[RMDB]
RNA sequence: GGGAACGACUCGAGUAGAGUCGAAAACUAUGGUUCGCCAUAGGCUUAGCGUACUACUGUAGACAUGCGUGUACACUGUAGCUUCUCCCAAAUAGGAGAAGCGCAGAUAGUGGUAGCGCAACAGCUACAGUAUCGCCCUGGGCGGUUUCGACCGCAAGGUCCCGUAUAUAUUCGUAUAUACGGGACCAAAAGAAACAACAACAACAAC
Reactivity to 2A3 in 0.01 (KOAc 150mM, MgCl2 10mM, bicine 150mM(pH8.5), 24C), signal-to-noise 6, nucleotides 027 to 156: c000u000a000u020g020g050u050u080c240g030c080c010a000u010a010g050g000c060u090u150a030g000c010g050u050a080c060u020a000c010u040g010u020a000g050a060c050a110u070g000c020g010u090g120u300a010c020a010c010u050g000u030a100g010c000u000u000c010u050c010c010c040a190a300a170u300a120g000g000a000g000a000a010g010c000g000c000a000g010a090u100a040g090u070g060g020u150a010g040c000g000c020a030a030c030a050g130c000u100a010c010a000g010u010a000u070c000g010c000c000c010u080g010g060g010c020g000g050u000u070u090c140g060a020c000c000g010c040a050a030
Reactivity to DMS in 0.01 (KOAc 150mM, MgCl2 10mM, bicine 150mM(pH8.5), 24C), signal-to-noise 2, nucleotides 027 to 156: c020u000a000u010g000g020u000u010c300g030c010c000a010u010a010g010g000c080u000u000a050g040c030g030u010a100c110u000a030c010u000g000u000a050g000a060c070a300u000g010c000g060u000g030u000a220c000a080c000u000g000u000a170g050c000u000u010c000u000c000c000c040a070a150a240u010a040g000g000a020g020a020a010g050c000g010c050a030g000a070u000a130g000u000g010g010u000a300g030c010g040c000a020a110c110a130g020c000u000a010c000a020g000u000a030u010c020g000c010c010c080u000g030g000g000c000g020g000u000u000u000c110g030a080c000c000g050c030a040a300
Chemical mapping of a 207-nucleotide RNA with 2A3 and DMS. DMS (dimethyl sulfate) methylates the pairing face of unpaired adenines and cytosines. For DMS the reverse transcriptase was MarathonRT. 2A3 adducts were read by reverse transcription with SuperScript II with manganese.